[RMDB]
RNA sequence: GGGAACGACUCGAGUAGAGUCGAAAAAGCAUUCCGGUUCAGUGGUGCAGUAACAUCGGGGAUAGUCAGAAGCGGCCUCGCGUUUUUGAUGAAACUUUAGAGGAUAAGGCAGGAAUUGAUGGCUUUGGUUCUGCUCCUGCACGAAAAUUUAGGCAAAGAGUGACAAACAGUUCGCUGUUUGUCACUCAAAAGAAACAACAACAACAAC
Reactivity to 2A3 in 0.01 (KOAc 150mM, MgCl2 10mM, bicine 150mM(pH8.5), 24C), signal-to-noise 1, nucleotides 027 to 156: a020g020c010a090u050u000c050c000g100g000u050u010c020a050g090u060g000g000u010g050c030a020g020u050a020a020c020a030u000c060g000g000g000g010a000u050a040g010u030c010a010g010a010a000g020c020g000g000c010c000u000c030g050c040g000u000u080u000u040u110g000a040u010g000a050a000a000c050u140u250u150a030g010a010g070g000a010u070a050a010g040g000c050a000g020g040a130a070u140u190g050a050u180g040g030c090u060u040u130g030g000u190u000c020u000g030c020u000c050c000u000g000c060a020c050g000a030a000a000a000u040u100u070a010g000g040c000a000a040a110
Chemical mapping of a 207-nucleotide RNA with 2A3.